[RMDB]
RNA sequence: GGGAACGACUCGAGUAGAGUCGAAAAAAAAGAUAUGGAGCGAUAUCAGAGAGGUGUAGGAACUGUACUCGGAAACGAGUACUCAGUACUACACUACCCACCUCUGUAAGUCGCUCCUAAGUCAAAAUCCCUAUCUGAAGUUCGCUUCAGAUAGGGAAAAAGAAACAACAACAACAAC
Reactivity to DMS in 0.01 (KOAc 150mM, MgCl2 10mM, bicine 150mM(pH8.5), 24C), signal-to-noise 1, nucleotides 027 to 126: a110a030a050a080g000a030u020a300u000g000g010a000g040c030g000a030u000a300u030c000a000g000a060g000a050g000g010u000g010u010a010g030g000a100a100c240u000g050u000a010c000u000c000g000g030a100a010a110c000g000a000g010u000a030c000u000c060a060g000u000a080c000u000a010c000a010c020u000a020c030c050c130a300c120c000u000c000u000g000u020a010a240g010u000c000g000c000u000c000c000u000a000a050g050u000c050a080a050a070a080
Structure probing data (DMS) for a 177-nucleotide construct. The RNA was probed in 150 mM KOAc, 10 mM MgCl2 and 150 mM bicine (pH 8.5) at 24 C. It was measured as part of the RMDB library TTRDES. For DMS, 991 sequencing reads were counted.